The data come from the RNA Mapping Database (RMDB), library OK2TST. Chemical mapping of a 177-nucleotide RNA with DMS. Conditions: 150 mM KOAc, 10 mM MgCl2 and 150 mM bicine (pH 8.5), 24 C.

RNA sequence: GGGAACGACUCGAGUAGAGUCGAAAAACGUACCACCACUGGCCGUUGUUCCACUAACAUCCAACCGUGGUUCUCAGCAGCAGCAAUCCGCAGGUUUUCCUCCGUUAGGUUUGCACGCUCCAGUGGUAACCACCAUCUCGUUCGCGAGAUGGUGGUUAAAAGAAACAACAACAACAAC
Reactivity to DMS in 0.01 (KOAc 150mM, MgCl2 10mM, bicine 150mM(pH8.5), 24C), signal-to-noise 2, nucleotides 027 to 126: a080c090g000u000a220c100c060a140c010c010a020c030u000g000g000c300c000g000u000u000g000u000u000c030c000a030c030u000a070a150c270a100u030c280c160a040a070c200c120g000u000g000g020u000u000c000u000c030a080g000c050a100g010c110a160g000c000a060a020u000c040c010g020c180a130g020g000u010u010u000u020c080c060u000c120c090g000u000u020a300g040g020u000u000u000g000c030a160c030g020c020u010c030c000a050g010u000g000g010u000
Reactivities are given for positions 27 through 126.